[RMDB]
RNA sequence: GGGAACGACUCGAGUAGAGUCGAAAACCUCGGGACCACGCUGCUCUGGGCGGAAGAGUCUUCUGACACUUCUAGCCUAUUCAGCUUCGCGUCCUUGAGGCCUGGCGUAACGCGGCUCUUGCCACCACUACCAGUACACGUUCGCGUGUACUGGUAGAAAAGAAACAACAACAACAAC
Reactivity to DMS in 0.01 (KOAc 150mM, MgCl2 10mM, bicine 150mM(pH8.5), 24C), signal-to-noise 2, nucleotides 027 to 126: c020c000u000c010g000g000g020a020c010c000a150c300g000c000u000g000c000u010c000u000g000g000g000c010g000g000a010a000g000a080g020u000c000u020u020c280u040g010a030c010a090c020u000u000c000u000a150g020c020c000u000a020u010u030c000a030g000c000u000u000c200g000c190g020u000c000c000u000u000g040a020g000g050c030c040u000g010g000c030g020u000a040a090c150g000c090g010g010c090u000c050u000u000g000c000c010a070c070c040a180
Source: RMDB library VIROID, as collected in RNAgym. Structure probing data (DMS) for a 177-nucleotide construct. Reactivities are rounded to 0.1 and cut off at 0 and 3. The reactions ran in a buffer of 150 mM KOAc, 10 mM MgCl2 and 150 mM bicine (pH 8.5), at 24 C.